An RNA of 177 nucleotides, treated with DMS and 2A3 and read out base by base. 2A3 adducts were read by reverse transcription with SuperScript II with manganese. DMS (dimethyl sulfate) methylates the pairing face of unpaired adenines and cytosines. Values cover nucleotides 27 to 126. For DMS the reverse transcriptase was MarathonRT.
[RMDB]
RNA sequence: GGGAACGACUCGAGUAGAGUCGAAAAAGCAUCUCAACGGACUACUGAUGAGGAAGCGUCGUAUUCUCCUCAUAAGCCAUGCCAGAUGUUAAGUGUCAGCAUGACGACUGCUAGAAGUCCUACACAGCCACCACUAGUCGUUCGCGACUAGUGGUGGAAAAGAAACAACAACAACAAC
Reactivity to DMS in 0.01 (KOAc 150mM, MgCl2 10mM, bicine 150mM(pH8.5), 24C), signal-to-noise 1, nucleotides 027 to 126: a140g000c070a040u000c000u020c100a180a250c070g000g000a250c000u000a020c210u110g050a020u030g000a030g000g000a000a040g000c030g000u030c140g000u000a020u000u000c080u000c000c000u000c060a000u000a040a030g070c070c000a010u000g000c000c040a010g010a120u000g000u000u170a120a150g000u000g090u000c120a070g120c000a100u060g000a030c060g010a250c170u000g000c010u000a020g070a190a020g040u000c000c000u190a000c110a040c150a210g030
Reactivity to 2A3 in 0.01 (KOAc 150mM, MgCl2 10mM, bicine 150mM(pH8.5), 24C), signal-to-noise 2, nucleotides 027 to 126: a000g010c090a050u020c000u010c030a060a060c090g040g010a010c000u110a000c020u030g010a050u030g020a030g040g030a070a050g070c030g190u150c070g000u070a080u070u100c030u000c000c000u010c010a000u020a060a020g000c000c010a050u050g000c000c030a050g000a010u000g010u210u080a230a070g100u100g040u090c030a030g000c000a000u030g000a000c100g000a010c040u070g000c000u070a060g010a050a000g080u020c010c010u160a060c070a000c000a090g060